[RMDB]
RNA sequence: GGGAACGACUCGAGUAGAGUCGAAAAUUUACCUACAGGUUUUGGACAAGGAGGUGCCAUGAGUAGGGAGGGCAGUCUUCUGUCCCUGGGUCAUGCAAGGCAGAAAUGAAGAGUUAGCGCAUGACAGACGUGUAGACGCUUUCGAGCGUCUACACGUAAAAGAAACAACAACAACAAC
Reactivity to 2A3 in 0.01 (KOAc 150mM, MgCl2 10mM, bicine 150mM(pH8.5), 24C), signal-to-noise 1, nucleotides 027 to 126: u070u040u130a160c000c000u000a000c060a120g060g140u030u100u280u300g090g000a070c020a140a020g000g000a010g000g040u050g030c040c030a040u170g010a000g100u150a100g000g000g030a100g020g000g030c000a030g080u040c000u010u000c000u010g140u120c000c000c000u090g000g090g050u000c000a000u010g000c000a000a070g200g000c030a030g250a130a180a020u260g030a090a050g110a000g210u070u040a040g010c020g010c010a000u000g010a000c020a030g050